Structure probing data (2A3) for a 177-nucleotide construct. The reactions ran in a buffer of 150 mM KOAc, 10 mM MgCl2 and 150 mM bicine (pH 8.5), at 24 C.
[RMDB]
RNA sequence: GGGAACGACUCGAGUAGAGUCGAAAACAACAAAACAAAACAAAAACAAAAACAAUGUGCGCCGAUCGAGGACGGGCACAACAAAAGGAGAAAAGCGCAAAGAAAAGCGCAACUCCAUCCUCGACAACAUCCGUCAGACCUUCGGGUCUGACGGAUGAAAAGAAACAACAACAACAAC
Reactivity to 2A3 in 0.01 (KOAc 150mM, MgCl2 10mM, bicine 150mM(pH8.5), 24C), signal-to-noise 1, nucleotides 027 to 126: c020a010a010c010a040a160a000a000c120a050a000a100a060c140a070a290a020a000a030c100a040a120a000a000a000c050a000a270u150g040u000g040c300g050c080c010g080a140u050c000g000a000g000g000a000c000g000g000g000c030a000c000a080a060c030a020a100a020a020g000g020a000g000a000a070a000a000g010c050g000c060a060a140a060g140a050a300a060a000g000c000g000c000a020a020c000u000c000c000a000u020c050c000u000c000g000a000c000a020a020